[RMDB]
Record summary
An RNA of 177 nucleotides, treated with 2A3 and read out base by base.
RNA sequence: GGGAACGACUCGAGUAGAGUCGAAAAUUUCAGGAGCUGUUAUUCUGUUAGAAUUUAUACCAGAGAUUGCAAUACCUGUAUUAGGUACUUUUGCACUUGUAUCAUAUAUUGCGAAUAAGGUUCUAACCACCGGUGCACUGUUCGCAGUGCACCGGUGAAAAGAAACAACAACAACAAC
Reactivity to 2A3 in 0.01 (KOAc 150mM, MgCl2 10mM, bicine 150mM(pH8.5), 24C), signal-to-noise 2, nucleotides 027 to 126: u060u070u090c090a120g020g000a060g000c040u020g090u300u030a000u000u000c000u090g100u010u060a100g000a190a100u000u160u000a000u060a000c020c020a000g000a010g010a210u300u190g000c010a000a010u040a020c020c020u160g000u300a300u110u300a100g000g000u040a230c180u100u060u020u060g000c000a000c000u000u000g030u050a070u000c040a000u040a000u000a060u220u160g080c000g000a000a020u030a160a000g010g060u000u010c000u040a110a040c020
The data come from the RNA Mapping Database (RMDB), library OK1LIB.
2A3 adducts were read by reverse transcription with SuperScript II with manganese.